[RMDB]
RNA sequence: GGGAACGACUCGAGUAGAGUCGAAAAGAUAUGGAUACAGUAUGGAGCUGCGAUGUCGGAAACGACAUCCAGCUAUGAAGUACGUAUCCUAAGUCAAAACGUGCCUAUGGUUCGCCAUAGGCACGAACAUUAUAUAGGACUUCGGUCCUAUAUAAUGAAAAGAAACAACAACAACAAC
Reactivity to 2A3 in 0.01 (KOAc 150mM, MgCl2 10mM, bicine 150mM(pH8.5), 24C), signal-to-noise 5, nucleotides 027 to 126: g010a000u020a010u070g000g000a010u010a020c070a160g020u020a020u070g080g060a060g030c000u010g050c180g060a000u000g000u010c000g000g020a060a010a010c010g000a000c000a010u000c000c000a000g000c010u040a210u030g010a000a000g010u000a000c010g000u000a000u000c000c000u000a020a000g010u000c030a000a040a100a190c030g010u000g010c000c010u000a010u000g010g120u070u100c300g100c080c000a000u010a000g000g020c000a000c000g000a000a000
Reactivity to DMS in 0.01 (KOAc 150mM, MgCl2 10mM, bicine 150mM(pH8.5), 24C), signal-to-noise 6, nucleotides 027 to 126: g000a030u000a130u010g000g000a010u000a000c010a110g030u000a010u000g000g010a030g020c000u000g010c280g000a010u000g010u000c010g000g010a050a040a060c000g010a010c000a000u000c000c000a000g010c000u000a060u010g010a140a300g010u000a000c010g010u010a010u000c000c000u000a010a080g000u000c010a130a060a140a240c020g020u000g010c000c000u000a010u000g000g010u000u020c250g020c000c000a000u000a000g000g000c000a000c010g000a020a110
Annotation
An RNA of 177 nucleotides, treated with 2A3 and DMS and read out base by base. For DMS, 13,555 sequencing reads were counted. Reactivities are given for positions 27 through 126. For 2A3 the reverse transcriptase was SuperScript II with manganese. The RNA was probed in 150 mM KOAc, 10 mM MgCl2 and 150 mM bicine (pH 8.5) at 24 C.